[RMDB]
RNA sequence: GGGAACGACUCGAGUAGAGUCGAAAAGAAGACUUACAGAAGUUUACGGAUUAACUGGUAGUGGUUACCUUAAAUAGCCACAAUGGCUUAUAAUGAGUUAUUACAAAUCCACGUGAAUUGCUGGGAAGCCUUAAAGACUUGUUAACUACAACGUAACCCUAGACUGAUCUUUCGAGAUCAGUCUAGGAAAAGAAACAACAACAACAAC
Reactivity to 2A3 in 0.01 (KOAc 150mM, MgCl2 10mM, bicine 150mM(pH8.5), 24C), signal-to-noise 3, nucleotides 027 to 156: g050a030a010g020a020c000u020u050a020c030a040g040a030a010g070u030u050u040a030c020g030g060a100u080u080a150a120c100u180g030g020u040a110g000u010g030g010u050u010a010c000c010u070u030a070a170a110u070a040g010c010c000a020c030a020a030u110g020g020c000u030u030a080u080a240a120u270g040a000g030u050u050a020u020u040a050c060a040a040a040u000c010c010a050c030g010u000g020a030a040u030u020g010c000u030g050g020g040a000a010g010c030c000u050u120a090a140a000g030a030c020u020u020g010u040u050a090a030c050u070a030c130a100a000c100g030u040a030a050c010